An RNA of 177 nucleotides, treated with 2A3 and read out base by base. For 2A3, 1,457 sequencing reads were counted. Source: RMDB library OK1LIB, as collected in RNAgym.

RNA sequence: GGGAACGACUCGAGUAGAGUCGAAAAGCAUACGUUACAUAUAGUGUGUUCGUAUGCGGUAAGCAACACACUAUAUGUAAGCUUACCACCGUACGGUGGACAUGCGAAAGCAUGUCCAUCGUACGGAGCUGCAAGUAGCGUUCGCGCUACUUGCAGCAAAAGAAACAACAACAACAAC
Reactivity to 2A3 in 0.01 (KOAc 150mM, MgCl2 10mM, bicine 150mM(pH8.5), 24C), signal-to-noise 1, nucleotides 027 to 126: g000c040a060u060a130c120g190u050u000a000c030a000u000a000u000a000g010u020g010u010g020u040u050c220g080u170a130u210g050c030g010g060u150a070a000g020c010a020a000c000a000c000a000c000u000a000u000a000u000g000u000a000a000g000c000u040u010a020c000c000a000c000c000g000u000a000c010g000g000u000g000g000a000c010a000u000g000c010g020a060a000a000g000c000a000u000g000u000c000c000a000u000c000g000u000a000c000g000g000a000